The record gives the reactivity of an RNA of 177 nucleotides to DMS and 2A3. The 2A3 profile rests on 2,666 reads. For DMS, 1,897 sequencing reads were counted.

RNA sequence: GGGAACGACUCGAGUAGAGUCGAAAACAGAUGCUGGAUAAGUCCAAGGAGGCAGAAUCGCUUUUGGAUGACAUUCAGAAAGGCCGGAGUGAUUAUUUGGAAGAGAAAAGCCUGCCUAUUCUUUCCAGAUUUUUGAUCAGUUCGCUGAUCAAAAAUCAAAAGAAACAACAACAACAAC
Reactivity to DMS in 0.01 (KOAc 150mM, MgCl2 10mM, bicine 150mM(pH8.5), 24C), signal-to-noise 2, nucleotides 027 to 126: c050a170g000a070u030g010c060u000g010g000a010u000a010a300g030u010c020c020a070a050g010g000a080g000g010c010a080g020a140a140u030c150g070c020u000u060u000u030g000g010a000u000g000a170c190a080u000u000c020a050g000a100a160a040g000g020c010c050g000g000a100g000u010g000a110u060u000a030u000u040u010g020g000a110a080g000a100g000a060a070a110a090g040c000c010u010g000c000c000u000a140u000u000c000u000u000u040c050c040a050
Reactivity to 2A3 in 0.01 (KOAc 150mM, MgCl2 10mM, bicine 150mM(pH8.5), 24C), signal-to-noise 4, nucleotides 027 to 126: c040a020g090a070u130g020c000u000g010g020a010u020a040a000g010u000c010c020a080a020g180g140a080g280g000c020a030g170a210a170u170c120g020c030u040u050u030u040g030g000a010u040g000a020c030a060u030u040c010a030g100a130a080a000g040g000c030c020g010g040a060g020u090g060a150u040u100a050u070u140u070g040g010a030a020g000a020g060a060a050a090a000g010c000c020u030g020c020c000u030a100u060u010c010u050u010u000c010c000a010